About this RNA
This 177-nucleotide RNA was probed chemically with 2A3 and DMS. Values are in units of 0.01, from 0 to 300, in steps of 10. The data come from the RNA Mapping Database (RMDB), library OK2TST.
[RMDB]
RNA sequence: GGGAACGACUCGAGUAGAGUCGAAAACAGUGACAUGCAAGGGCUCAAUAAAUAAAUCUGACACUAUUGGUUGAUCUAUACAUUUGGGUAGACGAUCAUCUUUGUAUCUACGUCCCACACAUCAGAAGGAUAUACGCCUAUUCGUAGGCGUAUAUCCAAAAGAAACAACAACAACAAC
Reactivity to 2A3 in 0.01 (KOAc 150mM, MgCl2 10mM, bicine 150mM(pH8.5), 24C), signal-to-noise 3, nucleotides 027 to 126: c020a010g020u010g070a000c010a040u040g020c010a020a050g010g010g000c020u000c070a030a090u090a150a130a020u110a040a090a050u070c040u080g020a020c030a010c100u110a080u030u080g040g020u010u040g000a120u000c000u000a030u020a070c060a120u150u120u140g140g040g000u010a010g000a020c040g010a000u010c010a010u040c030u060u030u030g040u010a050u010c070u030a030c020g040u010c000c030c000a010c010a010c010a050u170c040a010g140a210a040
Reactivity to DMS in 0.01 (KOAc 150mM, MgCl2 10mM, bicine 150mM(pH8.5), 24C), signal-to-noise 4, nucleotides 027 to 126: c120a080g010u000g010a110c140a070u000g000c050a070a070g020g010g000c160u020c070a090a060u000a020a070a070u010a090a070a080u020c100u010g000a080c110a060c120u000a070u010u000g010g010u000u000g000a040u010c010u010a110u000a070c050a140u000u000u020g030g000g010u010a020g010a090c200g010a030u000c030a020u000c050u010u000u010g000u000a020u010c070u000a090c110g000u000c010c000c010a120c220a080c240a100u000c080a020g020a170a130